[RMDB]
RNA sequence: GGGAACGACUCGAGUAGAGUCGAAAAAAUGGUUGAAUGAGUGAGAUCUUUUGGACAUGUUCCGCACGGAACAGGAAGGAAAAGGCUAUAACAGAUCCGAGAUGCCCUCAGAUGCCCUGGGCUGCACAGUUUUAAAACGUUUCGACGUUUUAAAACUAAAAGAAACAACAACAACAAC
Reactivity to DMS in 0.01 (KOAc 150mM, MgCl2 10mM, bicine 150mM(pH8.5), 24C), signal-to-noise 7, nucleotides 027 to 126: a050a040u010g010g010u010u000g010a110a060u010g010a100g000u000g000a100g000a080u000c010u000u000u010u000g010g010a160c060a080u000g000u000u000c000c010g030c260a110c210g010g010a020a020c020a030g000g000a110a120g010g010a040a040a080a060g010g010c060u010a070u020a060a060c100a050g000a120u000c040c040g010a080g000a090u010g000c030c020c020u000c070a050g020a100u020g010c020c010c020u000g030g000g000c030u000g000c110a060c150
Reactivity to 2A3 in 0.01 (KOAc 150mM, MgCl2 10mM, bicine 150mM(pH8.5), 24C), signal-to-noise 3, nucleotides 027 to 126: a000a010u140g020g010u070u070g040a070a070u090g000a030g060u080g040a070g020a140u070c000u040u060u040u040g020g070a020c010a100u040g000u010u000c010c010g030c090a110c130g010g000a020a000c010a020g020g040a060a020g000g030a020a070a040a020g030g020c030u050a030u030a170a070c060a020g060a100u040c010c010g010a040g000a050u080g020c000c000c000u030c050a050g010a070u110g000c000c000c000u020g010g030g020c020u040g000c030a040c010